An RNA of 177 nucleotides, treated with 2A3 and DMS and read out base by base.
RNA sequence: GGGAACGACUCGAGUAGAGUCGAAAACUGAGGCUGUUCCUCCCCUAGAGCUGCCAGCCAAGAUCCUGACUGCGGACAAUCAGACGUACAUGGCUGUCCAGGGCAGCACUGCCUACCUUCUGUGCAACACUCGUGCUACAUUCGUGUAGCACGAGUGAAAAGAAACAACAACAACAAC
Reactivity to 2A3 in 0.01 (KOAc 150mM, MgCl2 10mM, bicine 150mM(pH8.5), 24C), signal-to-noise 1, nucleotides 027 to 126: c040u030g030a050g070g000c070u040g040u010u030c000c020u000c010c000c000c020u030a010g010a000g060c020u020g030c080c000a020g040c060c000a070a060g020a120u040c020c050u060g110a090c040u080g090c130g100g020a060c040a000a040u060c010a020g070a110c060g000u070a060c060a100u060g010g010c000u000g010u020c000c000a040g000g040g000c010a000g000c020a010c000u020g010c040c010u020a080c010c040u140u000c070u110g120u110g020c040a030a000
Reactivity to DMS in 0.01 (KOAc 150mM, MgCl2 10mM, bicine 150mM(pH8.5), 24C), signal-to-noise 2, nucleotides 027 to 126: c060u000g010a050g010g000c050u000g020u010u000c000c000u000c000c020c020c020u000a030g000a070g010c020u030g040c070c020a050g030c030c020a070a130g000a200u000c080c050u000g000a060c050u010g000c110g020g010a030c000a030a060u000c010a040g000a080c210g010u000a080c080a150u000g010g030c070u000g010u010c080c050a230g000g000g000c010a010g010c020a080c030u000g020c000c150u000a080c160c080u000u000c060u020g010u010g010c090a040a200